[RMDB]
RNA sequence: GGGAACGACUCGAGUAGAGUCGAAAAUUAAAUAGCGUAAUCGACAUUGAGAAUGUACGCUAAGUGUGUGUUGUAUGGGCUACGUCCAAUUGAACACACACACAGUUGGACCUAAUGUCGAAAAAAAACUACUCUACAAGUUCGCUUGUAGAGUAGUAAAAGAAACAACAACAACAAC
Reactivity to DMS in 0.01 (KOAc 150mM, MgCl2 10mM, bicine 150mM(pH8.5), 24C), signal-to-noise 5, nucleotides 027 to 126: u000u010a050a050a140u000a020g010c020g020u010a050a080u000c020g020a010c010a010u010u000g000a130g000a100a080u000g010u000a010c010g010c010u000a050a120g010u000g010u000g020u000g010u000u010g020u010a070u000g010g000g010c020u020a110c290g000u000c000c000a020a140u020u010g000a050a020c020a000c010a000c010a010c000a020c120a080g010u000u000g030g010a190c020c010u000a040a010u000g000u010c000g010a000a000a000a040a060a040a060
Reactivity to 2A3 in 0.01 (KOAc 150mM, MgCl2 10mM, bicine 150mM(pH8.5), 24C), signal-to-noise 6, nucleotides 027 to 126: u200u100a030a020a090u090a030g030c020g030u040a050a080u030c010g020a010c000a010u010u060g040a020g040a160a120u140g020u050a020c020g010c040u020a140a160g000u000g000u000g000u000g010u030u050g090u070a100u070g010g020g000c060u200a070c210g040u010c010c010a020a030u060u120g100a050a000c000a000c000a000c000a000c000a000c010a020g130u230u190g080g030a020c000c000u030a030a010u010g000u000c000g040a070a010a000a000a000a000a000